[RMDB]
RNA sequence: GGGAACGACUCGAGUAGAGUCGAAAAGGAAUUGGAAGGUCAUCCUUCACAGGAUCGUGUGGAAGUCGUGCUCGGGGCGGAAGCAUUAAAACCAUUCGAGCUAGUCAAUGCGUGGCGUGUCUCUCCGGUGUUUCUCUGGACUUCGGUCCAGAGAAAAUACAUUCUACGAAUUCGUUCGUAGAAUGUAAAAAGAAACAACAACAACAAC
Reactivity to DMS in 0.01 (KOAc 150mM, MgCl2 10mM, bicine 150mM(pH8.5), 24C), signal-to-noise 3, nucleotides 027 to 156: g000g000a090a120u000u000g010g000a080a060g000g000u000c050a110u000c020c010u000u010c110a110c110a170g010g000a050u010c050g040u010g030u000g010g000a110a080g030u000c070g010u000g020c010u000c010g000g000g010g030c020g020g020a100a100g020c060a110u010u010a060a090a090a120c020c020a120u000u000c050g000a070g000c030u010a100g010u000c050a060a080u000g010c040g030u010g010g010c060g020u000g020u010c030u000c020u010c010c010g010g030u000g000u000u010u000c000u000c000u000g000g010a010c010u000u000c300g030g020u000c000c010a000g000a020g000a000a000a010a090
Reactivity to 2A3 in 0.01 (KOAc 150mM, MgCl2 10mM, bicine 150mM(pH8.5), 24C), signal-to-noise 7, nucleotides 027 to 156: g050g020a050a080u150u120g030g020a030a020g040g020u110c050a080u110c030c000u070u100c070a070c030a050g040g010a040u070c050g010u030g010u040g090g030a060a040g030u080c040g020u040g020c010u020c030g010g000g020g010c030g010g020a030a000g010c010a010u050u190a050a040a040a060c020c010a010u060u090c060g010a020g020c030u030a030g070u050c050a070a070u090g030c040g060u030g010g000c010g010u030g040u000c010u000c000u000c050c030g040g030u040g040u010u040u000c000u000c000u000g000g000a000c000u020u040c240g050g000u000c000c000a000g000a000g000a000a000a000a000